Source: RMDB library OK1LIB, as collected in RNAgym. Structure probing data (2A3) for a 177-nucleotide construct. The RNA was probed in 150 mM KOAc, 10 mM MgCl2 and 150 mM bicine (pH 8.5) at 24 C. For 2A3, 761 sequencing reads were counted. Values cover nucleotides 27 to 126.
RNA sequence: GGGAACGACUCGAGUAGAGUCGAAAAUUGGCUUGCUAUAUUCUAUCUAGGUAAGUUUUUAGAUUGCAAAUUCCAAUUGCAAUAUAAACAAUUUGUCGAGUUCCUCGACUACCAGAUACCGCUUACCCCCGGUGAUUACGUUCGCGUAAUCACCGGGAAAAGAAACAACAACAACAAC
Reactivity to 2A3 in 0.01 (KOAc 150mM, MgCl2 10mM, bicine 150mM(pH8.5), 24C), signal-to-noise 2, nucleotides 027 to 126: u130u040g030g000c030u000u060g040c050u100a070u010a090u300u070c060u070a150u040c030u070a140g020g020u000a000a090g000u050u000u000u010u140a090g010a040u000u000g000c000a010a060a070u280u020c030c070a140a300u010u000g000c000a000a000u000a000u080a050a080a000c040a100a050u000u100u140g030u000c000g030a000g050u170u160c010c060u000c030g030a030c000u020a040c000c000a000g000a040u050a050c040c040g040c120u050u060a090c040c000